[RMDB]
An RNA of 177 nucleotides, treated with DMS and 2A3 and read out base by base. For 2A3, 5,325 sequencing reads were counted.
RNA sequence: GGGAACGACUCGAGUAGAGUCGAAAAGGGCGAUCCUUCGGGAUCGCCCAAAUAAAGGCAGUCGAGUGCAAGAAGCACAGUCAAUAACUGACGGCACGACAAAAAGUACAUGGUUCGCCAUGUACAACUAACUAAGUUUGUUCGCAAACUUAGUUAGAAAAGAAACAACAACAACAAC
Reactivity to DMS in 0.01 (KOAc 150mM, MgCl2 10mM, bicine 150mM(pH8.5), 24C), signal-to-noise 5, nucleotides 027 to 126: g010g010g020c010g040a000u000c000c000u020u010c240g020g020g020a020u000c010g000c000c000c000a000a010a040u010a050a110a110g010g000c070a070g010u000c030g020a120g020u000g000c020a160a090g010a110a150g010c020a040c040a120g010u000c040a080a100u020a090a100c150u000g000a040c030g000g020c040a060c030g010a030c090a070a060a080a090a100g000u000a000c000a010u000g000g010u000u000c230g030c000c000a010u000g000u000a000c000a050a160
Reactivity to 2A3 in 0.01 (KOAc 150mM, MgCl2 10mM, bicine 150mM(pH8.5), 24C), signal-to-noise 4, nucleotides 027 to 126: g010g020g020c060g000a010u040c070c090u120u130c290g010g010g000a000u030c000g010c000c000c010a000a010a000u000a000a010a000g090g040c030a020g000u020c000g050a010g040u020g000c040a100a080g130a200a010g210c020a010c010a030g030u030c030a010a070u180a220a070c090u060g020a000c000g020g040c090a030c100g040a000c040a000a140a000a010a010g010u010a000c010a000u000g000g030u060u070c210g000c050c000a000u000g010u000a000c000a000a010
It was measured as part of the RMDB library M2PK50.